Source: RMDB library OK2TST, as collected in RNAgym. Chemical mapping of a 177-nucleotide RNA with DMS and 2A3. For 2A3 the reverse transcriptase was SuperScript II with manganese.

RNA sequence: GGGAACGACUCGAGUAGAGUCGAAAAGUCUCUCGGUCUGACAGGGCAGGAGGAAUUCGAUAUUGACCUCAAGGGAGGUGACAUCGCCCCCGGUACAGUUCUCACAGUCACGACAAAGUGCGGCAAGCAGGUGAAUGGGGUUCGCCCCAUUCACCUGAAAAGAAACAACAACAACAAC
Reactivity to DMS in 0.01 (KOAc 150mM, MgCl2 10mM, bicine 150mM(pH8.5), 24C), signal-to-noise 1, nucleotides 027 to 126: g000u000c060u000c020u000c050g020g000u000c020u000g000a050c100a080g000g000g010c010a090g010g000a100g000g010a020a100u000u020c030g000a050u000a060u010u000g010a120c020c020u000c020a280a110g040g000g000a020g010g030u000g000a090c120a040u010c030g000c130c010c000c010c080g000g000u020a090c140a140g010u000u010c000u000c040a130c200a030g020u000c070a000c030g000a020c080a080a080a100g000u000g000c000g000g050c120a080a060g000
Reactivity to 2A3 in 0.01 (KOAc 150mM, MgCl2 10mM, bicine 150mM(pH8.5), 24C), signal-to-noise 1, nucleotides 027 to 126: g080u030c020u000c010u020c150g090g000u000c000u030g070a090c060a120g020g030g080c010a030g010g090a020g000g060a010a050u110u070c020g000a010u030a160u090u050g110a060c010c010u020c030a080a170g260g100g000a130g000g000u030g020a100c060a070u140c050g020c000c000c080c000c020g010g000u060a000c080a040g020u030u000c010u020c010a040c080a060g060u130c100a010c080g070a050c070a070a120a000g030u040g050c000g000g030c030a000a010g000